[RMDB]
RNA sequence: GGGAACGACUCGAGUAGAGUCGAAAAAUAACAGGAGGCGUGAUCUCUGGAAUUGGUAAAGGAGUUACAUCGGCAAGUAUUGCAAGGUUGUUUAGAUAUGAUUUUAGAGUUACUCCAAUUAAAUGUGAUCAUUAUCGGCAUUCGUGCCGAUAAUGAUAAAAGAAACAACAACAACAAC
Reactivity to DMS in 0.01 (KOAc 150mM, MgCl2 10mM, bicine 150mM(pH8.5), 24C), signal-to-noise 3, nucleotides 027 to 126: a060u030a070a100c140a080g010g000a090g000g010c130g010u010g000a070u030c040u020c020u000g000g000a030a020u000u000g020g020u010a020a080a060g020g000a020g010u000u000a030c060a120u000c010g000g000c010a030a080g020u050a080u040u000g000c030a100a040g010g010u010u000g000u000u000u000a120g010a090u040a060u020g000a040u000u000u000u000a060g010a070g030u000u010a020c050u010c020c000a080a170u010u020a030a080a090u030g020u020g020
Reactivity to 2A3 in 0.01 (KOAc 150mM, MgCl2 10mM, bicine 150mM(pH8.5), 24C), signal-to-noise 2, nucleotides 027 to 126: a000u080a020a020c020a000g060g000a040g000g000c050g010u110g050a070u090c050u000c030u080g000g070a030a000u120u040g070g060u130a050a000a200g030g050a030g020u050u000a030c010a240u030c030g000g050c060a000a130g190u070a210u050u280g020c000a000a070g150g000u050u090g000u000u160u030a030g030a000u180a040u210g060a040u000u200u000u090a010g000a000g010u000u000a030c000u000c000c000a000a150u140u120a120a070a030u120g040u110g100
An RNA of 177 nucleotides, treated with DMS and 2A3 and read out base by base. The reactions ran in a buffer of 150 mM KOAc, 10 mM MgCl2 and 150 mM bicine (pH 8.5), at 24 C. The DMS profile rests on 4,001 reads. The 2A3 profile rests on 612 reads. 2A3 is a SHAPE reagent: it acylates the 2'-hydroxyl of flexible nucleotides of all four kinds.